[RMDB]
RNA sequence: GGGAACGACUCGAGUAGAGUCGAAAAGAUAUGGAACUGUUUCUUUUGACGCGAGUCUAGUCGGAAACGACUAGCUCGCGAUAAGAAAUUUCCUAAGUCAUCAGGUGAAGCGUUCGCGCUUCACCAACGAAGUGGUAACGUUCGCGUUACCACUUCGAAAAGAAACAACAACAACAAC
Reactivity to DMS in 0.01 (KOAc 150mM, MgCl2 10mM, bicine 150mM(pH8.5), 24C), signal-to-noise 2, nucleotides 027 to 126: g000a020u020a300u000g020g000a030a070c300u000g000u020u000u000c000u000u000u000u000g020a190c060g000c000g000a020g000u010c020u010a000g020u000c000g030g000a060a090a140c000g000a010c000u000a000g000c000u000c000g020c000g030a000u000a020a020g000a010a050a030u000u010u010c000c000u000a070a170g020u000c050a080u020c140a090g020g010u000g000a010a000g000c000g050u020u020c210g010c000g010c000u000u000c000a000c010c060a030a060
Reactivity to 2A3 in 0.01 (KOAc 150mM, MgCl2 10mM, bicine 150mM(pH8.5), 24C), signal-to-noise 2, nucleotides 027 to 126: g040a010u160a030u150g010g010a000a040c140u090g140u030u030u000c000u130u070u110u210g300a130c060g020c000g020a010g030u110c030u000a000g010u000c000g000g030a060a110a080c010g000a010c000u020a000g000c010u020c030g000c000g000a010u020a010a010g000a000a000a010u030u020u000c020c000u010a190a030g070u010c020a120u040c110a200g040g030u010g020a000a000g000c000g020u080u300c300g020c010g020c110u030u010c010a010c030c010a000a030